[RMDB]
RNA sequence: GGGAACGACUCGAGUAGAGUCGAAAAGGGUACCAGACUAGAUACACGAUCUCAGACUAGUACGUACGCACUAGACUCAUGGACUAGGAUCGUACGAUCUCGGUACCUGAUCCCAUGCGGAUCGCUGGCAUACCCGAUCUUUCGAGAUCGGGUAUGCAAAAGAAACAACAACAACAAC
Reactivity to DMS in 0.01 (KOAc 150mM, MgCl2 10mM, bicine 150mM(pH8.5), 24C), signal-to-noise 2, nucleotides 027 to 126: g000g000g000u000a010c000c000a120g050a070c080u010a160g020a180u010a060c090a120c000g000a000u000c000u000c180a050g010a150c000u000a000g000u000a090c070g010u000a050c080g000c300a090c010u000a000g020a120c060u020c100a080u000g010g000a100c160u010a050g000g000a090u000c010g000u000a020c140g010a120u000c150u000c080g050g000u010a000c000c000u000g000a030u000c010c030c030a130u000g030c130g070g020a030u010c070g000c180u000g000
Reactivity to 2A3 in 0.01 (KOAc 150mM, MgCl2 10mM, bicine 150mM(pH8.5), 24C), signal-to-noise 2, nucleotides 027 to 126: g000g000g010u000a010c010c000a020g020a090c080u050a040g050a080u170a110c100a030c140g080a040u020c060u010c110a050g030a140c010u020a000g010u030a040c030g020u040a040c090g000c020a010c020u010a010g050a040c030u090c180a130u230g150g050a120c020u020a070g000g070a140u170c020g000u030a020c020g010a040u030c050u030c160g000g000u040a010c000c010u010g000a000u020c000c000c000a000u170g130c060g000g140a140u120c050g010c090u020g060

The record gives the reactivity of an RNA of 177 nucleotides to DMS and 2A3. Conditions: 150 mM KOAc, 10 mM MgCl2 and 150 mM bicine (pH 8.5), 24 C. DMS adducts were read by reverse transcription with MarathonRT.